This 177-nucleotide RNA was probed chemically with 2A3 and DMS. As a SHAPE reagent, 2A3 marks flexible, mostly unpaired nucleotides at the ribose 2'-OH. For 2A3, 1,063 sequencing reads were counted. The reactions ran in a buffer of 150 mM KOAc, 10 mM MgCl2 and 150 mM bicine (pH 8.5), at 24 C.
RNA sequence: GGGAACGACUCGAGUAGAGUCGAAAACUGUUUGACGAGUCUAACCGGAGUAUCCGGGAAGGCGUAGGGAAACCAAUAUGGCCGCAGCAUUGCGAGGGCCACCGUGUUCAAGCGCGGGGAGUCAAACUUUCUCGCUCUGAUUCGUCAGAGCGAGAAAAAAAGAAACAACAACAACAAC
Reactivity to 2A3 in 0.01 (KOAc 150mM, MgCl2 10mM, bicine 150mM(pH8.5), 24C), signal-to-noise 2, nucleotides 027 to 126: c000u000g020u020u000u000g010a040c040g000a050g070u000c000u010a070a030c000c000g000g000a080g120u170a170u120c000c000g020g000g000a000a010g020g020c000g000u020a120g000g000g000a000a060a060c010c000a050a070u160a120u180g020g010c000c010g030c010a020g050c180a280u160u300g020c010g030a030g020g050g000c000c000a000c000c000g010u000g000u110u250c190a120a090g080c010g030c000g000g000g010g070a020g000u000c010a000a000a000c000
Reactivity to DMS in 0.01 (KOAc 150mM, MgCl2 10mM, bicine 150mM(pH8.5), 24C), signal-to-noise 1, nucleotides 027 to 126: c050u000g030u010u000u000g000a020c000g030a270g000u000c000u000a030a300c040c000g020g020a300g000u000a100u010c000c020g000g000g000a180a040g020g050c030g000u000a110g000g020g000a110a170a180c020c040a050a240u000a090u020g000g020c030c000g020c070a300g000c180a240u020u010g020c010g000a110g000g010g000c000c000a000c100c060g000u030g000u000u070c110a150a020g000c050g000c070g000g030g040g030a070g010u000c000a020a000a010c010